[RMDB]
Record summary: This 177-nucleotide RNA was probed chemically with DMS and 2A3. For DMS the reverse transcriptase was MarathonRT. Conditions: 150 mM KOAc, 10 mM MgCl2 and 150 mM bicine (pH 8.5), 24 C.

RNA sequence: GGGAACGACUCGAGUAGAGUCGAAAACGGCAUAUCGUGAGCGCACUAGCCUGAAGCGGUUGCGGCGCCAGAUGGAAGCCAUCGUGUCCAAAGUCAGCGAUGACAUCCUUCAGCUGCGGCGCUGGCACUGUCAACUGCGGUUCGCCGCAGUUGACAGAAAAGAAACAACAACAACAAC
Reactivity to DMS in 0.01 (KOAc 150mM, MgCl2 10mM, bicine 150mM(pH8.5), 24C), signal-to-noise 1, nucleotides 027 to 126: c090g010g000c090a060u000a040u000c060g010u000g020a140g070c040g020c020a050c080u000a110g010c070c040u020g010a120a090g000c010g010g010u000u000g010c090g000g010c040g010c040c020a090g000a030u010g000g040a070a050g010c020c010a010u000c030g040u010g020u020c150c110a090a120a200g000u030c110a110g000c030g030a050u000g010a030c030a150u020c000c000u000u000c020a160g010c100u010g010c080g000g000c020g010c060u000g010g000c070a140
Reactivity to 2A3 in 0.01 (KOAc 150mM, MgCl2 10mM, bicine 150mM(pH8.5), 24C), signal-to-noise 1, nucleotides 027 to 126: c050g050g000c050a000u070a060u250c100g070u040g090a040g080c070g020c000a030c090u060a030g020c030c020u100g090a120a010g030c010g090g000u100u090g000c060g020g010c020g000c000c080a010g020a030u060g000g040a110a030g040c030c000a020u000c030g060u030g060u000c110c020a110a060a000g120u120c020a020g040c000g030a010u000g000a010c000a020u020c000c000u020u040c010a020g010c010u090g020c070g120g020c030g010c000u030g060g010c050a040